Chemical mapping of a 177-nucleotide RNA with DMS and 2A3. The data come from the RNA Mapping Database (RMDB), library OK1LIB. DMS adducts were read by reverse transcription with MarathonRT. Values cover nucleotides 27 to 126. The RNA was probed in 150 mM KOAc, 10 mM MgCl2 and 150 mM bicine (pH 8.5) at 24 C.
RNA sequence: GGGAACGACUCGAGUAGAGUCGAAAAAUUUAACUGCCAGGACGGUCACCUUUGGGGUGGUGACAAGUGUGAUCACUUGGGUGGUGGCUGUGUUUGCGUAUCUCCCAGGAAUCUCGUUUACCAGAUCAUGAUGAUAGGUAUUCGUACCUAUCAUCAUAAAAGAAACAACAACAACAAC
Reactivity to DMS in 0.01 (KOAc 150mM, MgCl2 10mM, bicine 150mM(pH8.5), 24C), signal-to-noise 6, nucleotides 027 to 126: a060u020u020u040a070a080c120u030g010c010c020a050g010g000a050c050g000g000u000c010a010c010c000u010u010u010g000g010g000g020u010g000g010u000g000a040c050a160a100g010u030g000u010g000a070u000c020a030c020u000u000g000g010g010u020g000g010u000g000g000c050u000g000u010g010u010u010u000g010c090g000u000a070u020c100u000c010c000c010a190g010g000a080a050u010c070u000c050g000u000u000u010a110c040c030a100g000a100u030c160
Reactivity to 2A3 in 0.01 (KOAc 150mM, MgCl2 10mM, bicine 150mM(pH8.5), 24C), signal-to-noise 9, nucleotides 027 to 126: a000u160u190u120a090a050c050u080g000c010c000a010g030g020a000c020g010g010u020c010a010c010c000u100u170u200g100g010g000g010u040g000g020u020g040a010c010a040a120g180u190g010u030g220a040u080c010a000c000u030u030g110g010g040u060g000g040u010g010g000c010u020g020u030g100u060u040u040g010c020g010u060a060u030c050u010c010c000c000a000g040g040a060a050u040c030u020c040g040u040u060u070a190c030c020a030g010a120u100c020